[RMDB]
RNA sequence: GGGAACGACUCGAGUAGAGUCGAAAAGUUUAUCAUAAACUUGGAGAACGUGUACGCCAAGCUAUCUUAAACACUGUUAAAUUUUGUGACCACAUGGUCAAGGCUGGUUUAGUCGGUGUGCUCACACGACAAACGAACACUUCGGUGUUCGUUUGUCAAAAGAAACAACAACAACAAC
Reactivity to DMS in 0.01 (KOAc 150mM, MgCl2 10mM, bicine 150mM(pH8.5), 24C), signal-to-noise 1, nucleotides 027 to 126: g030u000u000u000a000u000c040a140u000a030a070a120c000u000u020g000g000a160g010a070a220c080g000u010g000u000a170c080g000c010c000a070a050g040c070u000a050u010c040u000u000a090a050a030c010a140c220u010g000u010u010a050a090a220u000u000u030u000g050u000g000a000c070c010a100c150a080u020g000g000u000c090a080a090g000g030c000u000g000g010u000u030u000a000g050u000c000g030g010u000g010u000g000c210u000c030a030c030a020c200
Reactivity to 2A3 in 0.01 (KOAc 150mM, MgCl2 10mM, bicine 150mM(pH8.5), 24C), signal-to-noise 1, nucleotides 027 to 126: g020u000u020u040a060u050c030a030u040a070a020a020c000u020u010g050g080a070g050a200a060c080g050u120g040u150a000c020g040c020c040a010a010g000c020u030a010u030c050u060u080a020a030a000c040a020c090u140g050u170u100a030a090a100u160u140u150u150g090u000g020a010c020c000a030c020a090u090g000g000u060c020a010a010g000g000c020u000g090g260u090u070u030a020g000u040c010g000g050u000g020u040g060c020u010c020a070c020a020c020

The record gives the reactivity of an RNA of 177 nucleotides to DMS and 2A3. Conditions: 150 mM KOAc, 10 mM MgCl2 and 150 mM bicine (pH 8.5), 24 C. Values cover nucleotides 27 to 126. For DMS, 674 sequencing reads were counted.